[RMDB]
RNA sequence: GGGAACGACUCGAGUAGAGUCGAAAAAUGGAGUACAAGCAGGGUUCAGAAUCGCUUGGAGAACUGUUAGCAGUAGCGGAGAGGCUGGCUCAUGGAAUUAUGUGAAUGCUAGUGGGUACAGACAGAGCACCAACCAGUAUUUUGAUUUUGCACCUAAGACACUUACUACAUUCGUGUAGUAAGUGUCAAAAGAAACAACAACAACAAC
Reactivity to DMS in 0.01 (KOAc 150mM, MgCl2 10mM, bicine 150mM(pH8.5), 24C), signal-to-noise 2, nucleotides 027 to 156: a070u000g020g000a190g010u020a100c040a080a220g030c020a080g000g020g010u000u000c070a080g000a120a090u000c060g020c030u000u030g030g000a100g010a060a130c030u010g030u000u020a120g000c030a060g030u000a080g000c040g040g020a050g010a030g020g050c030u010g000g000c040u000c040a050u010g040g010a090a090u000u020a080u010g010u000g010a090a070u010g040c030u000a030g010u010g010g020g020u000a050c040a130g000a140c100a120g000a140g040c020a070c020c040a050a020c010c010a050g010u000a040u000u010u000u000g000a140u010u000u000u000g000c000a110c070c040u000a090a300
Reactivity to 2A3 in 0.01 (KOAc 150mM, MgCl2 10mM, bicine 150mM(pH8.5), 24C), signal-to-noise 4, nucleotides 027 to 156: a010u070g020g010a070g060u130a060c050a100a020g000c020a020g030g020g020u000u020c030a020g070a080a120u100c080g000c080u050u100g040g020a050g030a100a050c060u060g020u130u090a030g020c030a020g010u030a000g010c020g010g010a030g000a010g000g000c010u010g020g000c010u010c030a010u050g000g080a080a110u100u140a110u240g070u040g100a070a040u040g030c030u020a010g020u020g020g010g000u030a050c020a020g050a000c010a000g050a010g000c010a000c020c010a020a030c000c010a000g030u050a090u030u110u050u050g080a120u020u040u080u140g000c020a040c020c020u030a080a010
Source information:
The record gives the reactivity of an RNA of 207 nucleotides to DMS and 2A3. 2A3 adducts were read by reverse transcription with SuperScript II with manganese. For 2A3, 2,517 sequencing reads were counted. 2A3 is a SHAPE reagent: it acylates the 2'-hydroxyl of flexible nucleotides of all four kinds. The reactions ran in a buffer of 150 mM KOAc, 10 mM MgCl2 and 150 mM bicine (pH 8.5), at 24 C. It was measured as part of the RMDB library OK3TST.